Chemical mapping of a 177-nucleotide RNA with DMS and 2A3.
The RNA was probed in 150 mM KOAc, 10 mM MgCl2 and 150 mM bicine (pH 8.5) at 24 C.
2A3 adducts were read by reverse transcription with SuperScript II with manganese.
The DMS profile rests on 3,788 reads.
[RMDB]
RNA sequence: GGGAACGACUCGAGUAGAGUCGAAAAAAGCAGGGUGUGAGAGAAACUCUCUCCCAGCCGGUUCGCGCAGCCACCCUUUUCGACUCUACUCCGGUUAGCUGCGCGAACUGGCUGGCGUUCCCCAGAAUGACGAUUCUUAAUUCGUUAAGAAUCGUCAAAAAGAAACAACAACAACAAC
Reactivity to DMS in 0.01 (KOAc 150mM, MgCl2 10mM, bicine 150mM(pH8.5), 24C), signal-to-noise 3, nucleotides 027 to 126: a060a110g040c140a040g020g020g020u000g010u020g020a120g000a040g000a130a130a140c150u000c020u000c010u010c110c010c000a010g000c000c000g010g000u000u000c010g030c020g000c010a010g010c000c020a020c000c010c020u000u020u000u010c000g000a020c000u000c000u000a000c000u000c020c130g020g010u000u010a070g010c020u000g010c000g010c010g000a000a010c010u000g010g000c010u000g000g010c000g010u000u000c000c000c000c050a180g010a090a110
Reactivity to 2A3 in 0.01 (KOAc 150mM, MgCl2 10mM, bicine 150mM(pH8.5), 24C), signal-to-noise 1, nucleotides 027 to 126: a010a010g300c130a010g020g010g000u010g000u030g010a060g010a010g020a080a110a060c010u030c020u000c050u070c030c030c030a000g010c000c010g000g000u000u000c000g000c000g000c010a000g000c010c010a010c010c000c000u200u060u040u060c010g000a010c010u000c000u020a010c000u010c000c000g010g040u100u100a010g000c020u010g000c000g000c000g000a000a000c000u000g000g000c000u000g000g000c000g010u000u010c020c010c000c000a020g050a100a090